[RMDB]
RNA sequence: GGGAACGACUCGAGUAGAGUCGAAAAGUGAUCUUGAAGUCCGUGUACAAACUAAUGGCACAGCGCUUCAGUACGGUUGUCUUCUGAUGCAGUGGUUGCCAUUGUGUGAUAAGACGCGCACAUUGCAAAUGAGUGCAAUUUUCGAAUUGCACUCAUUAAAAGAAACAACAACAACAAC
Reactivity to 2A3 in 0.01 (KOAc 150mM, MgCl2 10mM, bicine 150mM(pH8.5), 24C), signal-to-noise 5, nucleotides 027 to 126: g040u050g050a100u050c040u070u120g030a090a010g030u050c050c020g020u050g010u050a170c060a070a120a020c050u100a090a040u030g000g000c000a010c020a020g030c030g020c020u010u000c000a010g030u060a030c070g130g090u210u180g070u140c080u070u010c000u030g020a010u020g010c070a080g040u010g040g120u250u050g000c000c000a020u030u050g060u010g010u000g050a060u040a190a060g060a030c040g020c010g000c010a000c010a050u100u220g030c050a030
Reactivity to DMS in 0.01 (KOAc 150mM, MgCl2 10mM, bicine 150mM(pH8.5), 24C), signal-to-noise 8, nucleotides 027 to 126: g020u000g000a070u000c030u000u000g010a100a100g010u000c120c030g020u000g010u000a080c100a070a120a080c090u010a030a030u000g000g010c000a030c030a300g010c100g010c010u000u000c010a010g010u000a050c090g020g000u010u010g010u010c140u000u000c010u000g000a030u010g000c010a080g050u000g010g020u000u010g010c000c010a020u000u000g010u000g010u000g010a130u010a090a100g010a050c050g010c050g000c150a060c060a080u010u000g020c130a060
Conditions: 150 mM KOAc, 10 mM MgCl2 and 150 mM bicine (pH 8.5), 24 C. Chemical mapping of a 177-nucleotide RNA with 2A3 and DMS. High DMS reactivity at an A or C suggests that its Watson-Crick edge is free. For DMS, 13,366 sequencing reads were counted. Reactivities are given for positions 27 through 126.